[RMDB]
RNA sequence: GGGAACGACUCGAGUAGAGUCGAAAACGCACUCUUCGCACGUGCCUGCGAGUAAACAGGGCCAUGGACAGGUACUUCGUGGGAGUACCCCGAAGUGUGGGCCGCGACACGUGGUACUUCAAGACGGUGAGCGUAUCCUCCGGAGAGCUCGUAGGACAAUUCGCUGUAGUUUCGACUACAGCGAAUUAAAAGAAACAACAACAACAAC
Reactivity to DMS in 0.01 (KOAc 150mM, MgCl2 10mM, bicine 150mM(pH8.5), 24C), signal-to-noise 2, nucleotides 027 to 156: c060g030c070a110c070u010c030u010u000c030g030c080a170c070g010u000g000c000c000u000g010c020g000a070g020u000a090a030a100c020a080g000g010g030c050c030a070u000g000g000a150c050a070g000g010u010a010c000u000u010c040g050u000g040g020g000a170g000u000a090c020c000c010c000g000a190a110g010u020g060u010g030g000g000c010c030g020c060g010a120c010a030c020g020u010g010g010u010a030c000u000u010c090a030a180g000a140c060g010g020u000g010a170g040c050g020u000a130u000c010c000u000c040c000g000g000a160g000a220g020c020u000c020g030u010a040g000g010a090c120
Reactivity to 2A3 in 0.01 (KOAc 150mM, MgCl2 10mM, bicine 150mM(pH8.5), 24C), signal-to-noise 2, nucleotides 027 to 156: c040g040c000a060c040u080c060u120u130c060g080c120a060c140g160u180g060c000c020u020g000c020g000a020g030u070a020a150a060c030a050g020g040g000c030c030a050u140g030g000a020c050a080g000g010u000a010c020u030u000c020g040u130g040g010g010a110g060u130a060c000c000c000c020g060a150a240g050u060g000u080g070g020g010c040c040g000c040g030a040c010a010c040g090u060g000g010u070a090c000u060u080c070a100a080g040a040c040g080g000u060g020a070g020c010g000u040a090u030c000c000u060c010c020g110g050a100g010a010g080c020u010c010g020u030a010g000g020a010c020